[RMDB]
RNA sequence: GGGAACGACUCGAGUAGAGUCGAAAAACUUAAAUCCUCAUUCCGCUCAACUCUUCGAUUGUAGACGACUAUCAAUAAACUGGGUGCUGUAAGCUUCCGAGUAGCGUUCAGUUACGAGGGGUUGAGGAGCCCUUCGCGUUUUCGAACGCGAAGGGCUAAAAGAAACAACAACAACAAC
Reactivity to 2A3 in 0.01 (KOAc 150mM, MgCl2 10mM, bicine 150mM(pH8.5), 24C), signal-to-noise 1, nucleotides 027 to 126: a000c190u220u190a030a010a100u070c000c000u050c010a190u030u030c000c060g040c010u010c000a000a000c000u080c000u030u050c000g060a010u000u030g060u020a150g010a050c000g000a000c030u060a080u170c100a210a160u030a060a000a000c000u000g000g000g000u020g000c000u070g200u280a070a030g050c010u190u090c140c050g150a000g070u050a000g000c000g030u070u070c000a070g050u060u070a000c030g000a000g000g000g050g000u000u000g000a020g000g000